[RMDB]
RNA sequence: GGGAACGACUCGAGUAGAGUCGAAAAGAUAUGGAGCCUGUAUGGGAGCUCCGCCAUCGGAAACGAUGGAUGGAGCUUUGAUCAUACAGGGCUCCUAAGUCAAAACCAGUGAGUUCGCUCACUGGAACCUUUAAAUAGGGUUCGCCCUAUUUAAAGGAAAAGAAACAACAACAACAAC
Reactivity to DMS in 0.01 (KOAc 150mM, MgCl2 10mM, bicine 150mM(pH8.5), 24C), signal-to-noise 4, nucleotides 027 to 126: g000a040u000a260u000g000g000a020g020c000c020u000g020u000a010u000g010g010g010a030g020c000u000c000c000g010c000c000a000u000c000g010g000a080a040a110c000g010a020u000g000g010a030u000g020g020a020g010c000u000u000u010g000a050u010c020a020u000a010c010a090g020g010g010c010u000c000c000u000a000a070g010u010c010a130a100a180a220c020c000a010g010u000g010a020g010u000u010c300g020c000u000c000a010c010u010g000g010a040a040
Reactivity to 2A3 in 0.01 (KOAc 150mM, MgCl2 10mM, bicine 150mM(pH8.5), 24C), signal-to-noise 4, nucleotides 027 to 126: g010a010u040a020u100g000g000a000g000c020c050u050g060u010a000u010g010g040g080a050g010c000u000c000c000g010c010c000a000u000c000g010g020a080a020a020c020g010a000u040g030g030a040u070g000g000a000g010c000u070u160u070g000a010u010c010a000u010a000c020a090g050g000g030c000u000c010c000u000a020a000g000u000c020a020a020a140a280c010c000a000g000u000g000a010g000u070u300c300g030c180u000c010a000c000u000g000g010a010a020